[RMDB]
RNA sequence: GGGAACGACUCGAGUAGAGUCGAAAAAUCAACAAAUUUGUGGCAAAGAAACUGGCCAUUGAGACAAUGAAUGACUUCAUCGGCAUAGAUGAGCAAAGUUCAAUUUACAGAGACAUGCCGUCUGCCCGAGGCUAAAAAUGUUCGCAUUUUUAGCCUCAAAAGAAACAACAACAACAAC
Reactivity to DMS in 0.01 (KOAc 150mM, MgCl2 10mM, bicine 150mM(pH8.5), 24C), signal-to-noise 3, nucleotides 027 to 126: a080u090c080a100a070c270a050a070a150u020u000u010g060u020g000g030c040a040a080a140g000a050a180a070c160u000g000g000c060c160a040u030u050g010a030g000a090c040a020a030u060g000a020a060u040g020a100c080u050u010c040a040u000c020g000g000c090a040u000a110g000a000u000g010a040g090c040a070a040a080g000u010u000c020a000a040u000u040u070a110c090a040g020a090g000a190c300a050u010g010c030c010g000u010c040u000g000c000c000c080
Reactivity to 2A3 in 0.01 (KOAc 150mM, MgCl2 10mM, bicine 150mM(pH8.5), 24C), signal-to-noise 5, nucleotides 027 to 126: a000u060c030a030a140c070a060a080a090u110u070u140g050u040g010g000c030a120a120a070g120a030a290a040c090u070g070g000c020c000a000u000u090g040a050g020a000c040a060a070u130g020a090a030u100g050a090c040u060u040c090a080u080c070g050g040c080a110u220a100g010a020u020g010a030g040c010a050a130a040g000u030u040c020a040a050u050u060u070a060c030a000g050a000g040a030c050a070u050g030c020c010g020u030c030u040g000c000c010c000

Annotation
An RNA of 177 nucleotides, treated with DMS and 2A3 and read out base by base. For DMS, 2,605 sequencing reads were counted. For 2A3, 3,772 sequencing reads were counted. The reactions ran in a buffer of 150 mM KOAc, 10 mM MgCl2 and 150 mM bicine (pH 8.5), at 24 C. It was measured as part of the RMDB library OK1LIB.